[RMDB]
RNA sequence: GGGAACGACUCGAGUAGAGUCGAAAACAUCCUCGCCGAGGUCCUUUCUGCUGCCUGUCCCGCCUCACCCCGCUCCAUCACACCAGCUGGCCCUCUUUGCUUCCUUUUCCCAGAAUCGUUAAGCCCCAGUGCAUGUCUUAUUCGUAAGACAUGCACUAAAAGAAACAACAACAACAAC
Reactivity to 2A3 in 0.01 (KOAc 150mM, MgCl2 10mM, bicine 150mM(pH8.5), 24C), signal-to-noise 6, nucleotides 027 to 126: c040a090u070c000c000u020c020g050c030c030g040a040g030g040u070c020c010u040u090u060c040u050g040c010u020g020c000c010u050g040u080c010c000c010g020c010c000u020c020a060c000c000c000c010g030c010u010c020c010a050u050c010a020c010a020c020c010a010g030c020u050g020g020c010c000c000u040c000u040u060u060g030c010u050u050c010c000u020u030u020u040c010c000c000a010g070a030a070u110c060g030u030u040a080a060g020c000c000c010c010
Reactivity to DMS in 0.01 (KOAc 150mM, MgCl2 10mM, bicine 150mM(pH8.5), 24C), signal-to-noise 4, nucleotides 027 to 126: c180a150u000c010c020u010c070g000c050c020g010a100g010g010u000c040c020u000u000u000c040u000g010c060u000g000c030c020u010g020u000c040c020c020g040c030c020u000c060a100c050c020c010c020g010c060u020c010c040a070u020c040a070c070a100c050c040a080g010c040u010g000g000c020c010c010u000c030u000u010u010g000c040u000u010c000c020u000u000u000u000c000c000c010a190g000a080a090u030c060g000u000u000a100a110g000c030c000c010c090